Annotation: Source: RMDB library RNAMAK, as collected in RNAgym. This 207-nucleotide RNA was probed chemically with 2A3 and DMS. Reactivities are given for positions 27 through 156. The reactions ran in a buffer of 150 mM KOAc, 10 mM MgCl2 and 150 mM bicine (pH 8.5), at 24 C. High DMS reactivity at an A or C suggests that its Watson-Crick edge is free.
RNA sequence: GGGAACGACUCGAGUAGAGUCGAAAACCCUCAUUCGUGAGGGCUAGCAGGGGUCACGCUGAGGGACAUGCUGAUACCUGAAGCCUCCACGGGUAUACCAGCAACAGCCUCCCCACCAGCGUGACGGAGGCACCCAAAUGUCUAUGUUCGCAUAGAACGAUGAUACGGUAUUCGUACCGUAUCAUCGAAAAGAAACAACAACAACAAC
Reactivity to 2A3 in 0.01 (KOAc 150mM, MgCl2 10mM, bicine 150mM(pH8.5), 24C), signal-to-noise 4, nucleotides 027 to 156: c000c010c000u010c010a040u060u100c200g170u010g010a010g000g010g000c040u040a040g060c110a120g030g160g050g000u000c000a000c000g000c000u010g010a100g030g030g040a090c080a230u120g000c000u010g000a000u000a010c000c000u020g050a100a030g010c000c000u000c010c010a010c010g000g010g000u000a010u040a080c160c050a010g000c000a030a130c030a230g180c050c070u170c030c010c010c000a060c030c010a000g000c000g010u000g000a000c010g000g000a000g000g010c000a020c010c000c020a050a110a050u160g030u010c000u010a020u030g030u080u090c210g010c090a000u020a020g020a050a040
Reactivity to DMS in 0.01 (KOAc 150mM, MgCl2 10mM, bicine 150mM(pH8.5), 24C), signal-to-noise 1, nucleotides 027 to 156: c000c010c040u000c010a070u000u020c290g110u000g000a010g050g010g020c010u000a090g000c090a110g000g020g060g010u000c000a000c010g000c070u000g000a200g000g040g010a150c080a200u010g020c000u010g020a080u000a010c000c000u020g010a060a140g000c040c000u010c030c000a300c020g040g000g130u000a150u010a070c120c030a040g030c040a110a180c120a100g030c130c040u030c040c000c020c040a150c060c010a070g000c040g010u000g040a040c000g000g010a050g040g000c000a140c010c000c060a110a040a070u000g030u010c000u000a050u040g000u010u010c140g080c010a090u000a040g000a140a230